[RMDB]
RNA sequence: GGGAACGACUCGAGUAGAGUCGAAAAGUUUGCGGGCUGCCAUGGCCCGUCGCCACCCGGGCGAGUUGACCCGCUGCUGCAGCCGCAUCACCUGAGGCGGCCGUCGGGUUAGGUCCAGCAGGGGCUGCGAUGGCCACAUGUUCGCAUGUGGCCAUCGAAAAGAAACAACAACAACAAC
Reactivity to DMS in 0.01 (KOAc 150mM, MgCl2 10mM, bicine 150mM(pH8.5), 24C), signal-to-noise 1, nucleotides 027 to 126: g030u000u000u010g000c000g020g010g010c030u000g040c110c210a100u000g010g000c060c000c020g020u000c070g000c020c010a160c040c000c020g000g020g000c000g000a070g000u000u010g000a070c040c000c070g010c160u010g000c080u010g000c180a030g000c000c000g040c040a050u010c080a200c250c230u020g000a070g000g000c020g000g030c010c020g030u000c110g000g000g030u000u000a080g000g010u000c070c030a100g000c060a100g020g000g000g050c050u010g000
Chemical mapping of a 177-nucleotide RNA with DMS. The reactions ran in a buffer of 150 mM KOAc, 10 mM MgCl2 and 150 mM bicine (pH 8.5), at 24 C.